Description: Structure probing data (2A3 and DMS) for a 207-nucleotide construct. The data come from the RNA Mapping Database (RMDB), library PDB130. For 2A3, 3,311 sequencing reads were counted. The reactions ran in a buffer of 150 mM KOAc, 10 mM MgCl2 and 150 mM bicine (pH 8.5), at 24 C. For DMS, 4,111 sequencing reads were counted.

[RMDB]
RNA sequence: GGGAACGACUCGAGUAGAGUCGAAAAGCCUGUUAACGUUUCUGCUAGCCUGUCUGCUGUCGAUUUAUUUUACAGCCGACUCCAUACGAGCAAUCUUCCGUUCGCUACACUAGAUCUUGAUACCACCUUUAGUUCGUUUAAACACGUUCUUGAUAGUUCAUAAUAUUGUGUUCGCACAAUAUUAUGAAAAAGAAACAACAACAACAAC
Reactivity to 2A3 in 0.01 (KOAc 150mM, MgCl2 10mM, bicine 150mM(pH8.5), 24C), signal-to-noise 4, nucleotides 027 to 156: g050c020c020u040g020u070u070a150a040c060g010u040u050u010c030u050g050c040u040a040g020c000c030u020g030u010c000u010g000c010u020g020u020c030g020a030u000u170u090a140u080u150u210u080a060c030a010g000c010c010g020a020c020u020c040c020a070u070a120c020g000a020g030c030a050a110u030c010u080u030c040c000g040u040u060c040g000c070u040a010c020a020c040u040a030g000a110u050c020u040u070g040a030u050a100c020c050a050c010c040u070u080u070a030g010u020u030c020g000u010u060u090a070a050a010c070a020c030g020u020u020c000u020u040g110a100u100a150g050u000
Reactivity to DMS in 0.01 (KOAc 150mM, MgCl2 10mM, bicine 150mM(pH8.5), 24C), signal-to-noise 1, nucleotides 027 to 156: g010c040c020u010g000u000u000a150a120c060g000u000u000u000c040u000g000c000u010a150g010c000c030u000g020u000c020u000g020c000u000g030u000c030g010a110u000u000u000a110u040u000u000u000a090c060a140g030c020c030g020a060c010u020c020c040a090u010a110c070g000a070g030c030a160a100u010c070u000u000c050c040g000u010u000c050g010c000u000a080c060a070c020u010a090g010a070u000c040u000u020g000a130u010a070c010c020a030c030c040u000u000u000a090g040u000u000c040g000u000u000u000a060a060a140c010a060c070g020u000u000c030u000u020g020a160u000a080g010u000